[RMDB]
RNA sequence: GGGAACGACUCGAGUAGAGUCGAAAACUGACCGUGGCGGAAUCGUUGUGGGUUUCGAGCCACGUCAUGAUCUUGACGGCGGCCUCGGCGGUGUCGGCACCGGUGGCCUUGGCCUUGGCCAUCAUCAACUUACUAACGACUUCGGUCGUUAGUAAGUAAAAGAAACAACAACAACAAC
Reactivity to DMS in 0.01 (KOAc 150mM, MgCl2 10mM, bicine 150mM(pH8.5), 24C), signal-to-noise 4, nucleotides 027 to 126: c090u010g000a040c120c080g040u000g010g030c000g010g000a010a010u000c020g010u000u000g010u010g020g010g010u000u000u000c020g010a170g010c030c020a030c020g000u000c010a030u000g000a100u010c120u010u000g010a030c050g010g020c100g020g000c010c010u000c070g010g010c030g030g010u010g010u010c100g020g000c060a050c070c070g010g030u010g000g010c010c020u000u000g010g000c030c030u000u000g010g010c000c010a050u000c040a070u000c120a080
Reactivity to 2A3 in 0.01 (KOAc 150mM, MgCl2 10mM, bicine 150mM(pH8.5), 24C), signal-to-noise 3, nucleotides 027 to 126: c030u020g030a020c060c140g020u010g030g000c020g000g020a020a030u030c030g070u130u270g100u280g170g000g000u030u020u040c070g040a060g030c000c010a030c000g000u000c010a020u150g070a110u040c090u080u060g020a010c010g030g060c010g020g000c000c000u010c010g020g000c010g090g040u060g080u100c040g060g040c070a040c040c050g090g030u080g060g000c030c000u000u040g050g000c000c020u030u080g040g000c020c000a020u030c000a020u060c020a020